RNA sequence: GGGAACGACUCGAGUAGAGUCGAAAACAUAUGACGGAGAGUGGAACACUCAGCGGAAACGCAUCCAAUGUGUGAAGUCUUUAAUGGGUAUAACAGUCAGUUGACCCAGAUCCCAACAGACAAUAAAAGUAAUUCUCGAAUUCGUUCGAGAAUUACUAAAAGAAACAACAACAACAAC
Reactivity to DMS in 0.01 (KOAc 150mM, MgCl2 10mM, bicine 150mM(pH8.5), 24C), signal-to-noise 3, nucleotides 027 to 126: c040a030u010a050u000g000a140c210g010g000a140g020a040g020u000g000g040a170a150c060a030c020u000c040a180g030c060g000g010a080a050a100c020g050c020a300u010c040c050a090a050u000g020u000g000u000g000a120a080g000u000c030u000u000u000a110a120u000g000g010g000u000a070u000a010a020c040a140g000u020c210a100g020u010u010g000a030c000c000c040a010g000a150u000c000c000c000a110a100c240a050g000a030c080a020a080u010a030a070a060
Reactivity to 2A3 in 0.01 (KOAc 150mM, MgCl2 10mM, bicine 150mM(pH8.5), 24C), signal-to-noise 3, nucleotides 027 to 126: c020a040u140a040u100g070a070c120g040g000a010g000a010g040u050g030g210a230a010c030a010c070u030c020a010g040c020g040g000a090a060a030c010g000c000a010u000c030c010a030a060u040g030u030g000u000g070a080a040g020u000c000u020u110u080a160a110u050g000g000g080u070a140u020a300a020c030a030g290u210c060a040g000u120u010g030a000c010c010c000a020g030a040u030c010c000c000a010a060c030a000g080a010c040a050a120u140a140a110a030
An RNA of 177 nucleotides, treated with DMS and 2A3 and read out base by base. 2A3 adducts were read by reverse transcription with SuperScript II with manganese. For 2A3, 1,964 sequencing reads were counted. DMS (dimethyl sulfate) methylates the pairing face of unpaired adenines and cytosines. The reactions ran in a buffer of 150 mM KOAc, 10 mM MgCl2 and 150 mM bicine (pH 8.5), at 24 C. It was measured as part of the RMDB library M2PK90.